Structure probing data (2A3 and DMS) for a 177-nucleotide construct. The data come from the RNA Mapping Database (RMDB), library RFM100. For DMS, 813 sequencing reads were counted.
[RMDB]
RNA sequence: GGGAACGACUCGAGUAGAGUCGAAAAGAAAGAAAGAAAGAGAGGGAGGUGAUGACACUGCAGAGGACUCUGCUGGGGAAGGCUGGCAGCACAGUCUCUGAGAGCCUCUGCAUCAUGCCUGCCUGAACGCAGGAUUUUUGUUCGCAAAAAUCCUGCGAAAAGAAACAACAACAACAAC
Reactivity to 2A3 in 0.01 (KOAc 150mM, MgCl2 10mM, bicine 150mM(pH8.5), 24C), signal-to-noise 1, nucleotides 027 to 126: g020a030a040a000g080a000a060a000g140a020a120a000g120a000g050a080g000g030g000a010g030g020u140g110a080u030g000a030c060a010c160u070g000c000a040g020a000g040g010a240c000u000c020u040g190c050u080g050g000g000g050a090a090g000g010c000u020g020g020c020a010g000c030a060c010a120g060u030c050u000c000u070g010a000g000a000g010c000c000u010c010u000g010c000a000u010c000a000u000g030c020c000u130g110c000c000u010g000a000a000
Reactivity to DMS in 0.01 (KOAc 150mM, MgCl2 10mM, bicine 150mM(pH8.5), 24C), signal-to-noise 1, nucleotides 027 to 126: g000a040a100a140g000a000a160a140g000a110a070a010g030a300g000a300g000g000g000a050g050g040u040g000a040u000g010a120c300a290c080u000g000c000a000g000a000g040g000a130c000u010c010u000g010c290u000g000g000g000g000a080a040g000g000c140u000g000g000c050a030g040c140a210c000a060g030u000c000u000c030u090g000a010g130a000g000c000c000u000c000u050g010c000a000u010c000a020u000g050c000c030u000g000c000c000u000g050a100a030
DMS adducts were read by reverse transcription with MarathonRT. Reactivities are given for positions 27 through 126. Conditions: 150 mM KOAc, 10 mM MgCl2 and 150 mM bicine (pH 8.5), 24 C.